[RMDB]
RNA sequence: GGGAACGACUCGAGUAGAGUCGAAAAAGGACGGUCCAAGGGCGAGUAGACCUCCCUCGGCACGAGGAUGUGCCUGAUUUUGAAUGGGGGAGGAUGUCACGGACAAAUUCCGUGACCAUGUUAGGCCUCAUUGAAGAGCGUACCUAGCUGCGUUUCACUCCAUCUAUUUCUUCGGAAAUAGAUGGAGAAAAGAAACAACAACAACAAC
Reactivity to 2A3 in 0.01 (KOAc 150mM, MgCl2 10mM, bicine 150mM(pH8.5), 24C), signal-to-noise 7, nucleotides 027 to 156: a000g050g000a010c020g020g170u040c030c020a030a070g030g000g000c040g030a030g060u110a030g080a050c000c010u010c000c000c000u030c040g000g020c010a000c020g080a140g260g130a190u300g020u010g020c000c010u100g110a210u060u070u130u250g200a230a170u230g000g000g000g000g000a000g010g000a000u040g020u000c000a000c010g010g010a030c190a040a120a070u220u000c000c000g000u000g000a010c010c010a050u180g040u090u060a060g020g020c020c000u020c040a120u030u220g080a210a120g000a020g050c020g000u110a250c000c000u020a040g030c030u080g060c030g020u000u010u010c020a020
Reactivity to DMS in 0.01 (KOAc 150mM, MgCl2 10mM, bicine 150mM(pH8.5), 24C), signal-to-noise 2, nucleotides 027 to 156: a080g010g020a040c070g050g020u000c030c030a050a170g010g050g020c020g040a200g020u040a090g020a150c040c020u000c010c000c010u000c010g020g000c020a020c020g000a160g040g010a190u010g000u000g010c000c000u000g000a120u000u010u010u000g010a130a160u010g050g010g000g010g010a100g010g030a020u000g000u000c000a040c000g040g000a070c030a120a080a150u000u000c010c000g000u030g000a040c010c070a090u000g020u000u000a120g030g010c030c010u010c040a140u000u000g000a130a230g000a040g000c040g050u000a070c010c010u000a130g020c020u000g000c040g070u000u000u010c030a300